Structure probing data (DMS and 2A3) for a 177-nucleotide construct. The RNA was probed in 150 mM KOAc, 10 mM MgCl2 and 150 mM bicine (pH 8.5) at 24 C. The 2A3 profile rests on 2,642 reads. Source: RMDB library OK2TST, as collected in RNAgym.

[RMDB]
RNA sequence: GGGAACGACUCGAGUAGAGUCGAAAAGGUUGUAAGGGGCCAUCCACAUUCAGCCCAUGCCCGAUCAUUCAGUGGAACAUGAAAGCCGGCUGGCCUAUCGGUGCAGGUCACCCAUGUAUCGGCUGUACAAGAUCACAGUUUUCGAACUGUGAUCUUGAAAAGAAACAACAACAACAAC
Reactivity to DMS in 0.01 (KOAc 150mM, MgCl2 10mM, bicine 150mM(pH8.5), 24C), signal-to-noise 4, nucleotides 027 to 126: g000g020u000u000g020u000a090a110g020g000g000g020c070c090a070u000c020c030a060c060a130u010u000c080a070g000c010c000c040a110u000g000c010c010c000g000a080u010c190a110u000u000c070a050g010u000g000g010a040a050c050a060u010g000a060a080a170g010c050c090g010g020c120u010g010g010c020c020u000a080u010c090g000g020u000g020c060a050g010g000u010c020a050c070c020c030a060u000g010u000a100u000c040g000g000c040u000g010u010a170
Reactivity to 2A3 in 0.01 (KOAc 150mM, MgCl2 10mM, bicine 150mM(pH8.5), 24C), signal-to-noise 2, nucleotides 027 to 126: g030g010u030u020g020u100a060a100g030g000g040g080c120c090a090u080c040c000a100c020a080u090u080c020a010g010c030c030c000a010u100g030c020c000c030g030a110u090c050a080u180u100c000a010g060u110g130g000a030a030c010a050u100g040a040a050a080g090c050c010g070g000c060u040g020g000c000c020u110a170u160c040g040g080u050g030c020a010g070g030u080c020a040c020c000c000a000u030g020u020a210u090c030g020g020c010u030g000u040a040